[RMDB]
RNA sequence: GGGAACGACUCGAGUAGAGUCGAAAACACAGUUUUCCUUCGGUGAACUUGCGGAGAAGGCUCUCCAAUUUCAUUGCUCCUGGCAUAUCACCGGAGAUUUGGAGCUUCUUUGUCAUCAGAGCAGUCGGAUCGCAGUAAAUUUCGAUUUACUGCGAUCAAAAGAAACAACAACAACAAC
Reactivity to DMS in 0.01 (KOAc 150mM, MgCl2 10mM, bicine 150mM(pH8.5), 24C), signal-to-noise 2, nucleotides 027 to 126: c080a140c160a090g000u000u000u010u000c040c010u010u030c030g000g020u000g010a050a170c100u040u020g010c010g000g000a010g000a010a050g020g000c090u040c030u010c000c020a010a070u010u000u030c170a090u070u030g010c010u000c010c020u060g000g000c050a060u010a140u020c030a070c020c000g000g010a030g000a070u010u020u000g010g000a040g000c040u000u000c020u030u000u010g020u050c090a060u000c150a030g010a130g000c100a050g020u010c070g000
Reactivity to 2A3 in 0.01 (KOAc 150mM, MgCl2 10mM, bicine 150mM(pH8.5), 24C), signal-to-noise 7, nucleotides 027 to 126: c090a010c000a060g020u020u020u050u070c020c000u050u060c040g040g010u060g040a180a190c050u080u090g010c050g030g040a030g010a080a050g090g010c050u040c000u000c060c000a080a090u060u130u140c160a150u100u220g030c000u020c010c040u110g100g000c040a050u080a060u130c030a020c030c000g000g000a020g010a020u080u030u070g030g000a050g020c000u010u000c000u030u030u060g060u100c010a090u040c010a030g020a000g040c040a030g060u080c060g070
The record gives the reactivity of an RNA of 177 nucleotides to DMS and 2A3. It was measured as part of the RMDB library OK1LIB. The RNA was probed in 150 mM KOAc, 10 mM MgCl2 and 150 mM bicine (pH 8.5) at 24 C. 2A3 adducts were read by reverse transcription with SuperScript II with manganese.